[RMDB]
RNA sequence: GGGAACGACUCGAGUAGAGUCGAAAAGUUCCUGUCGACGUCAUCUUACUCUUUACUUCUGUGAGUGAGAUUUCCGAUGUCCAAACAGGGUGAUUGUUUCCCUCAAAUGCAUGCCAGAUAAAGUGCCGAGCUAGUGUGUAUUCGUACACACUAGCUCAAAAGAAACAACAACAACAAC
Reactivity to DMS in 0.01 (KOAc 150mM, MgCl2 10mM, bicine 150mM(pH8.5), 24C), signal-to-noise 3, nucleotides 027 to 126: g010u020u010c000c010u010g010u000c170g000a000c030g010u000c010a120u000c030u000u000a000c000u000c010u000u010u040a130c250u020u030c170u040g010u030g010a040g010u000g000a030g000a010u000u000u000c260c180g000a020u000g010u000c010c070a190a120a170c030a010g000g000g000u040g000a080u010u010g000u000u000u000c000c020c000u010c160a070a050a100u030g000c030a040u000g010c050c070a070g020a110u020a030a090a090g010u000g000c060c180
Reactivity to 2A3 in 0.01 (KOAc 150mM, MgCl2 10mM, bicine 150mM(pH8.5), 24C), signal-to-noise 8, nucleotides 027 to 126: g040u050u110c010c000u010g010u010c000g000a010c010g010u000c000a020u000c000u000u010a000c000u030c010u080u220u130a190c070u240u300c100u240g210u060g040a000g000u000g000a000g000a010u090u010u000c050c060g000a010u010g020u000c000c020a090a100a000c010a010g040g010g050u110g100a160u050u140g040u040u050u010c010c020c000u030c030a090a110a020u100g030c020a010u080g040c010c040a050g030a120u150a120a170a010g060u060g030c020c020